[RMDB]
RNA sequence: GGGAACGACUCGAGUAGAGUCGAAAAAGCCACAGUGAUGUGUGGUUACCCGCGCCUGAAUAUAUAGGGCGUGUGGAGGGAACGUGGGGAAGUGAAACAUCUCAGUACCCACAGGAAGAGAAAACAACACGGGACAAAAAUUCGUUUUUGUCCCGUGAAAAGAAACAACAACAACAAC
Reactivity to DMS in 0.01 (KOAc 150mM, MgCl2 10mM, bicine 150mM(pH8.5), 24C), signal-to-noise 4, nucleotides 027 to 126: a050g000c010c000a000c000a010g010u010g000a080u020g000u000g000u000g000g000u000u010a050c010c020c020g010c000g000c040c000u000g010a190a170u050a150u050a030u010a160g000g000g020c000g000u020g000u020g030g020a170g030g000g000a130a110c160g000u000g000g000g000g000a140a160g030u030g000a130a090a150c210a070u000c010u000c090a070g000u000a200c000c010c000a000c010a040g010g000a110a130g010a090g000a060a050a070a040c140a060a140
Reactivity to 2A3 in 0.01 (KOAc 150mM, MgCl2 10mM, bicine 150mM(pH8.5), 24C), signal-to-noise 3, nucleotides 027 to 126: a000g000c010c000a000c010a000g020u020g070a090u020g040u000g000u000g050g040u030u070a070c010c000c000g000c000g000c000c000u080g050a160a030u140a020u090a030u110a290g030g020g030c020g000u000g010u060g010g040a110g000g010g020a080a020c040g000u000g000g010g010g010a000a040g090u100g170a110a120a040c040a160u050c010u000c080a010g000u000a000c010c000c000a000c020a000g070g000a110a000g030a000g000a020a070a010a030c060a000a000
This 177-nucleotide RNA was probed chemically with DMS and 2A3. For 2A3 the reverse transcriptase was SuperScript II with manganese. Conditions: 150 mM KOAc, 10 mM MgCl2 and 150 mM bicine (pH 8.5), 24 C. It was measured as part of the RMDB libraries RFM100 and RFMREP.